[RMDB]
RNA sequence: GGGAACGACUCGAGUAGAGUCGAAAAGAUAUGGAUUUAUUGGCUUUGAUCUGUUACUAAUAGGUCGGAAACGACCUUAAAACAGGGAGCAGGAAUCCUAAGUCGUAUCGUCACUUCGGUGACGAAAACAAUAAUCAUUGUUCGCAAUGAUUAUUGUAAAAGAAACAACAACAACAAC
Reactivity to DMS in 0.01 (KOAc 150mM, MgCl2 10mM, bicine 150mM(pH8.5), 24C), signal-to-noise 9, nucleotides 027 to 126: g000a040u000a300u000g000g010a010u000u000u000a070u020u010g040g020c010u000u000u010g010a070u010c000u000g000u000u000a110c220u010a080a100u000a010g010g010u010c000g000g000a070a080a210c000g010a010c000c000u000u000a020a040a030a020c010a010g000g010g000a000g020c000a070g000g000a010a010u000c000c000u000a050a140g000u000c020g010u010a120u000c000g000u000c000a010c000u000u000c200g020g010u000g010a010c000g000a000a020a100
Reactivity to 2A3 in 0.01 (KOAc 150mM, MgCl2 10mM, bicine 150mM(pH8.5), 24C), signal-to-noise 7, nucleotides 027 to 126: g020a020u070a030u120g030g010a020u010u040u070a300u280u300g290g010c000u290u150u080g060a100u070c000u000g010u010u020a100c030u030a070a180u050a200g000g000u000c000g000g010a050a080a010c000g000a000c000c000u000u020a030a060a000a000c000a000g030g040g010a010g000c020a010g060g060a000a010u000c000c000u020a170a030g040u020c030g030u100a120u140c010g010u010c000a010c010u050u080c300g170g000u000g000a000c000g010a020a000a000